[RMDB]
RNA sequence: GGGAACGACUCGAGUAGAGUCGAAAAGAUAUGGAAUUGAGGGAGUCGAUGGUCGGAAACGACCAUACGACGAGGAUCUCAUUCCUAAGUCAAAACACUUCCUCAUGCUUCGGCAUGAGGAAGUGAAGUCAUACAAGCACUUCGGUGCUUGUAUGACAAAAGAAACAACAACAACAAC
Reactivity to DMS in 0.01 (KOAc 150mM, MgCl2 10mM, bicine 150mM(pH8.5), 24C), signal-to-noise 2, nucleotides 027 to 126: g010a030u000a300u000g000g000a010a000u010u020g020a000g020g010g000a010g020u000c000g010a030u050g010g000u000c010g010g000a020a090a170c000g000a000c010c010a020u000a020c020g030a040c000g000a120g010g010a080u020c010u000c010a050u000u000c000c000u010a010a120g020u000c020a170a090a080a220c010a020c000u010u000c000c000u000c000a000u010g000c000u010u020c200g020g020c010a010u000g000a000g000g000a000a000g010u020g000a050a060
Reactivity to 2A3 in 0.01 (KOAc 150mM, MgCl2 10mM, bicine 150mM(pH8.5), 24C), signal-to-noise 1, nucleotides 027 to 126: g000a000u070a040u100g020g040a000a030u180u250g020a020g040g030g000a030g010u010c020g000a000u000g020g000u000c000g000g000a080a060a060c020g000a000c000c010a010u050a110c020g000a000c010g000a010g020g000a000u020c000u000c000a000u000u010c000c000u020a110a020g060u030c010a000a020a130a060c000a010c000u000u020c000c010u000c010a010u000g000c000u060u100c300g230g000c010a000u000g000a000g020g000a000a000g000u000g000a000a000
An RNA of 177 nucleotides, treated with DMS and 2A3 and read out base by base. Values are in units of 0.01, from 0 to 300, in steps of 10. The DMS profile rests on 1,538 reads. The data come from the RNA Mapping Database (RMDB), library TTRDEL. For DMS the reverse transcriptase was MarathonRT. For 2A3 the reverse transcriptase was SuperScript II with manganese. Conditions: 150 mM KOAc, 10 mM MgCl2 and 150 mM bicine (pH 8.5), 24 C.